[RMDB]
An RNA of 170 nucleotides, treated with 2A3 and DMS and read out base by base. For 2A3 the reverse transcriptase was SuperScript II with manganese. The DMS profile rests on 15,613 reads. For DMS the reverse transcriptase was MarathonRT. The data come from the RNA Mapping Database (RMDB), library 15KLIB.

RNA sequence: GGGAACGACUCGAGUAGAGUCGAAAAUGCUCGAGGACGUCCUCCCUUCCCCCUCGAGCCUUCUUCGAGUCGGACCGGCUCAUCUCGGCAGAGGGCGGCAGUCCUGGGUUCUCUUAUCUUUUCUCUGUAGCCACCCAGUUCGCUGGGUGGAAAAGAAACAACAACAACAAC
Reactivity to 2A3 in 0.01 (KOAc 150mM, MgCl2 10mM, bicine 150mM(pH8.5), 24C), signal-to-noise 5, nucleotides 027 to 129: u070g020c010u000c000g000a030g020g030a080c020g070u050c040c000u050c020c010c010u000u070c000c010c000c010c000u010c010g030a040g010c000c010u070u040c010u050u120c070g010a010g020u010c020g000g040a060c040c020g000g000c010u010c010a080u030c040u020c000g020g020c020a010g020a040g070g000g000c020g010g010c020a020g010u030c000c000u070g000g000g000u070u020c040u000c000u050u120a160u120c040u040u100u080u010c020u000c010u010g090u080a040g040
Reactivity to DMS in 0.01 (KOAc 150mM, MgCl2 10mM, bicine 150mM(pH8.5), 24C), signal-to-noise 4, nucleotides 027 to 129: u000g020c000u010c010g000a000g040g010a140c030g010u040c040c050u040c000c000c000u010u030c030c030c040c020c020u050c000g010a050g010c060c000u030u030c060u050u020c040g020a060g040u000c040g040g060a150c100c040g010g070c020u050c000a050u040c010u030c070g000g060c000a080g020a150g000g000g000c050g050g070c120a030g000u000c000c000u020g000g040g000u040u010c020u020c020u040u090a130u050c070u040u030u030u000c030u000c040u070g020u040a080g040